[RMDB]
RNA sequence: GGGAACGACUCGAGUAGAGUCGAAAAUGCGCCCCAACUGCACUCCGUAGCGGCAUCUACGUUAAAAGGUCCAGUUUAAUUAUAACUGCAAAAAAUAAUAACAAUUCUUACGCUUUAGCUGCUUAAUAGGCGCUUAACGUAGAUCCUCCUAGGCUUGGACUCAAUUCUACUUCGGUAGAAUUGAGUCAAAAGAAACAACAACAACAAC
Reactivity to 2A3 in 0.01 (KOAc 150mM, MgCl2 10mM, bicine 150mM(pH8.5), 24C), signal-to-noise 2, nucleotides 027 to 156: u070g000c040g070c020c010c000c020a090a080c050u180g030c000a020c050u060c070c000g020u030a000g010c000g030g000c000a000u080c030u020a020c020g070u040u030a020a080a000a000g030g000u000c020c000a010g000u010u010u090a270a100u070u200a090u040a170a020c030u050g000c000a000a000a180a000a050a050u150a070a030u070a090a100c070a080a080u140u060c010u110u080a030c020g080c050u110u000u050a010g010c030u110g010c010u200u050a070a020u150a300g020g010c000g010c010u000u010a000a000c000g000u020a000g010a060u030c030c010u040c020c040u080a050g020g080c030u030u030g060